Source: RMDB library OK3TST, as collected in RNAgym. The record gives the reactivity of an RNA of 207 nucleotides to 2A3. The RNA was probed in 150 mM KOAc, 10 mM MgCl2 and 150 mM bicine (pH 8.5) at 24 C.
RNA sequence: GGGAACGACUCGAGUAGAGUCGAAAAGUUAUUGGCAGCAUCAUGUACAAAUACAUCAUAAGUAACAUCAGCACUUCCAUCUGCCUUAUCAGACAUUGCUCUUAUUAUUACAAAUGGAGUAUUAUUUAAAUAGCAUACAUGAGCUAUAGCUCCACCACAGGCCUAGCGGUUUCGACCGCUAGGCCUGAAAAGAAACAACAACAACAAC
Reactivity to 2A3 in 0.01 (KOAc 150mM, MgCl2 10mM, bicine 150mM(pH8.5), 24C), signal-to-noise 2, nucleotides 027 to 156: g050u080u040a120u160u000g080g000c060a010g000c000a080u000c010a000u060g050u010a020c040a010a200a020u150a090c030a000u130c050a020u080a280a020g060u180a210a080c010a080u120c010a010g020c030a000c110u140u000c010c010a030u020c020u020g000c010c000u020u020a060u050c020a060g020a030c030a070u000u110g030c080u030c000u100u040a090u080u020a060u070u050a090c020a010a090a130u090g040g030a010g020u010a100u120u020a060u000u160u060a220a300a130u040a050g000c010a010u030a120c000a020u140g070a050g020c000u030a020u010a110g000c000u000c070c000a030c020c030a020